[RMDB]
RNA sequence: GGGAACGACUCGAGUAGAGUCGAAAAUUUAAGGAGGAGUUAGAUAAAUGGUUUAAGAAUCAGACGUCUAUUGCGCCUGAUUUAUCCCUCGAUUUCGAGAAGUUAAAUGUUACUUUCCUGGACCUGAGUGUUUGUUUAUAUUCGUAUAAACAAACACAAAAGAAACAACAACAACAAC
Reactivity to 2A3 in 0.01 (KOAc 150mM, MgCl2 10mM, bicine 150mM(pH8.5), 24C), signal-to-noise 4, nucleotides 027 to 126: u030u020u030a010a040g020g020a010g030g000a010g020u070u090a040g060a140u080a040a190a040u120g040g100u080u090u100a180a060g040a030a010u000c000a000g020a020c010g040u020c110u180a220u080u300g010c020g010c010c000u000g010a000u010u010u040a070u060c010c010c000u010c020g050a080u130u110u120c040g010a010g020a090a010g030u070u150a060a110a090u110g020u100u040a020c000u020u010u030c010c020u040g040g040a070c010c000u010g030a030
Reactivity to DMS in 0.01 (KOAc 150mM, MgCl2 10mM, bicine 150mM(pH8.5), 24C), signal-to-noise 6, nucleotides 027 to 126: u010u000u000a120a060g000g000a060g000g010a060g000u000u000a050g010a090u000a070a120a090u000g010g010u010u000u010a090a130g010a030a000u000c010a010g010a030c050g010u000c230u000a130u010u010g010c010g000c010c000u000g000a020u000u010u000a090u010c080c040c010u000c030g010a260u000u000u010c030g010a030g010a060a090g000u010u000a020a060a110u000g000u010u010a050c040u000u000u000c010c010u000g000g010a110c050c020u000g010a170